[RMDB]
RNA sequence: GGGAACGACUCGAGUAGAGUCGAAAAGGUGGAAACACUUUGUGCGUGGGUUAGGUAGCCUCAUAUACAUGAACGACUGAUGUAGAGUUCGGUUGGGGAGAUAAGUAUCUAAUGCGUGUCAUUAGGUCUAUACACAGGUGUUCGCACCUGUGUAUAGAAAAGAAACAACAACAACAAC
Reactivity to 2A3 in 0.01 (KOAc 150mM, MgCl2 10mM, bicine 150mM(pH8.5), 24C), signal-to-noise 3, nucleotides 027 to 126: g030g000u020g010g020a020a070a000c010a000c000u050u060u090g060u040g020c030g030u050g000g060g020u050u020a060g000g050u030a020g040c020c000u030c010a050u140a000u050a120c070a060u140g020a080a020c040g150a080c060u100g100a140u100g100u130a060g040a050g100u060u050c010g010g010u030u030g020g020g000g010a060g010a040u090a110a070g080u050a030u080c010u000a020a000u050g030c100g090u110g080u090c010a000u000u020a010g050g000u000
Reactivity to DMS in 0.01 (KOAc 150mM, MgCl2 10mM, bicine 150mM(pH8.5), 24C), signal-to-noise 3, nucleotides 027 to 126: g020g030u000g000g010a130a100a170c020a030c010u000u000u010g030u000g010c070g020u010g000g020g000u000u010a060g010g010u000a070g020c040c020u020c030a060u000a120u000a090c070a070u000g010a040a090c070g020a100c090u000g020a090u010g010u010a100g010a190g010u000u010c020g000g010u010u000g010g000g000g000a090g010a070u010a020a110g010u000a060u010c010u000a020a010u000g000c020g000u000g000u000c010a020u000u000a010g000g010u000